[RMDB]
RNA sequence: GGGAACGACUCGAGUAGAGUCGAAAAGAUAUGGAUGCCCUCUUCGCGAUAAGCUGAGUAUCGGAAACGAUACCAGCUUUUGACGCGAAAGGCAUCCUAAGUCAAAACUAGCCACUUCGGUGGCUAGCAAACGUCAAUGGUUCGCCAUUGACGUUUGAAAAGAAACAACAACAACAAC
Reactivity to DMS in 0.01 (KOAc 150mM, MgCl2 10mM, bicine 150mM(pH8.5), 24C), signal-to-noise 4, nucleotides 027 to 126: g000a040u000a300u000g000g000a020u000g000c020c020c200u010c160u000u000c010g030c000g010a130u020a010a020g010c000u000g000a180g020u000a000u000c000g010g000a050a070a130c010g010a010u000a000c000c000a010g000c000u000u000u000u000g020a210c100g000c000g000a010a030a120g000g000c000a000u000c000c000u000a010a070g000u010c030a110a060a100a300c010u000a000g000c000c000a010c010u000u020c200g030g010u000g000g010c000u000a000g010
Reactivity to 2A3 in 0.01 (KOAc 150mM, MgCl2 10mM, bicine 150mM(pH8.5), 24C), signal-to-noise 1, nucleotides 027 to 126: g010a020u080a020u160g000g010a010u000g010c040c000c000u100c090u020u010c000g020c020g090a100u040a200a010g010c000u000g080a070g210u010a010u000c010g010g010a090a040a050c000g000a010u000a010c010c010a000g000c000u020u020u020u010g010a010c030g010c000g010a000a010a010g000g000c000a010u000c000c000u000a050a010g020u050c020a000a000a130a170c000u000a000g010c010c010a010c010u070u070c270g160g000u000g030g000c000u000a000g000
Chemical mapping of a 177-nucleotide RNA with DMS and 2A3. Source: RMDB library TTRDES, as collected in RNAgym. The RNA was probed in 150 mM KOAc, 10 mM MgCl2 and 150 mM bicine (pH 8.5) at 24 C.